[RMDB]
RNA sequence: GGGAACGACUCGAGUAGAGUCGAAAAAAGAGGUUGUACAUUUCGAACAAGAAAUCGUGCUUGUUGGUAAACAGGGCGAUAUGAACGUAUUACGUGAGUCGUUACACAAAUUCACCGUCGAAAAUGACCACGUCUUAGUCUUCGGACUAAGACGUGGAAAAGAAACAACAACAACAAC
Reactivity to 2A3 in 0.01 (KOAc 150mM, MgCl2 10mM, bicine 150mM(pH8.5), 24C), signal-to-noise 3, nucleotides 027 to 126: a000a000g130a080g080g010u050u020g020u010a040c030a090u020u010u040c060g020a080a000c010a040a100g160a060a090a040u040c000g000u150g260c080u020u030g010u000u010g100g090u180a020a090a110c020a020g000g010g000c050g000a000u060a110u220g030a010a000c040g050u140a100u100u160a010c100g030u050g010a030g040u040c000g000u000u120a050c160a010c000a070a160a010u140u080c120a120c140c000g030u030c020g070a030a000a000a230u040g070a060